[RMDB]
RNA sequence: GGGAACGACUCGAGUAGAGUCGAAAAUAGCAGUCUUUCGAGACUGCUACAUUAAUAGUCGCUAGAAAACGAUCAAAACUAGCGUCUAACAUAACGAUCGAAAAGACGCACCCUUCGGGGUGCGUAAUCAGACUCUGUUAUUCGUAACAGAGUCUGAAAAAGAAACAACAACAACAAC
Reactivity to DMS in 0.01 (KOAc 150mM, MgCl2 10mM, bicine 150mM(pH8.5), 24C), signal-to-noise 2, nucleotides 027 to 126: u000a040g000c020a000g010u000c010u000u010u030c200g040a030g000a000c000u000g000c010u000a000c060a100u020u020a140a080u000a020g010u000c000g010c000u000a010g010a070a030a070a080c060g010a020u000c020a140a050a100a080c000u000a010g010c020g000u000c010u020a030a120c190a130u000a060a070c240g000a040u000c020g020a100a080a100a110g010a020c010g000c000a010c000c000c000u000u000c190g030g010g040g050u010g010c000g010u000a000a030
Reactivity to 2A3 in 0.01 (KOAc 150mM, MgCl2 10mM, bicine 150mM(pH8.5), 24C), signal-to-noise 2, nucleotides 027 to 126: u060a000g000c010a010g000u000c020u040u140u150c200g060a020g000a000c010u000g000c000u010a000c000a000u030u040a050a030u030a060g040u030c000g000c000u000a000g060a060a140a060a150c080g040a030u060c060a050a020a060a040c010u010a000g010c000g020u000c010u060a170a040c090a160u220a150a070c090g050a070u040c010g030a010a000a050a070g120a010c000g010c020a000c000c000c010u000u050c190g050g000g030g000u000g040c000g000u000a000a000

Notes
Source: RMDB library M2PK50, as collected in RNAgym. This 177-nucleotide RNA was probed chemically with DMS and 2A3. DMS (dimethyl sulfate) methylates the pairing face of unpaired adenines and cytosines.